An RNA of 177 nucleotides, treated with DMS and 2A3 and read out base by base. 2A3 is a SHAPE reagent: it acylates the 2'-hydroxyl of flexible nucleotides of all four kinds. The reactions ran in a buffer of 150 mM KOAc, 10 mM MgCl2 and 150 mM bicine (pH 8.5), at 24 C. It was measured as part of the RMDB libraries RFM100 and RFMREP.
[RMDB]
RNA sequence: GGGAACGACUCGAGUAGAGUCGAAAAACGAGCUAUGAUGCUACGGCAUCAUAGCUCGAAGUAAUGAUACUUCUAAGGUUGAAGCCGGCUCAUCCGGAAUAGAGGCGGAAGUGAGAUUCCUAUGUAACCUAAUAGGACUAUUCGUAGUCCUAUUAGGAAAAGAAACAACAACAACAAC
Reactivity to DMS in 0.01 (KOAc 150mM, MgCl2 10mM, bicine 150mM(pH8.5), 24C), signal-to-noise 9, nucleotides 027 to 126: a110c020g000a010g010c000u000a000u000g010a010u000g020c010u010a110c180g030g010c000a000u000c000a000u000a000g000c000u000c010g000a000a010g010u010a090a090u020g010a140u040a030c020u000u000c010u010a080a300g000g020u010u010g010a160a170g010c010c000g010g000c300u030c220a140u020c010c010g020g000a050a050u010a150g000a070g000g000c260g000g000a020a020g000u000g000a100g000a120u000u000c010c000u000a060u030g020u020a080a150
Reactivity to 2A3 in 0.01 (KOAc 150mM, MgCl2 10mM, bicine 150mM(pH8.5), 24C), signal-to-noise 9, nucleotides 027 to 126: a010c010g000a000g020c000u010a000u000g000a000u000g010c010u030a020c130g110g000c000a000u000c000a000u000a000g000c000u000c000g000a000a000g000u050a020a060u080g100a020u020a110c010u020u010c010u050a100a140g160g020u030u040g070a070a010g030c010c000g020g010c050u070c100a220u110c050c010g010g070a070a100u140a050g070a020g040g050c030g000g010a020a020g000u020g040a060g010a050u020u050c010c000u040a090u150g200u080a070a080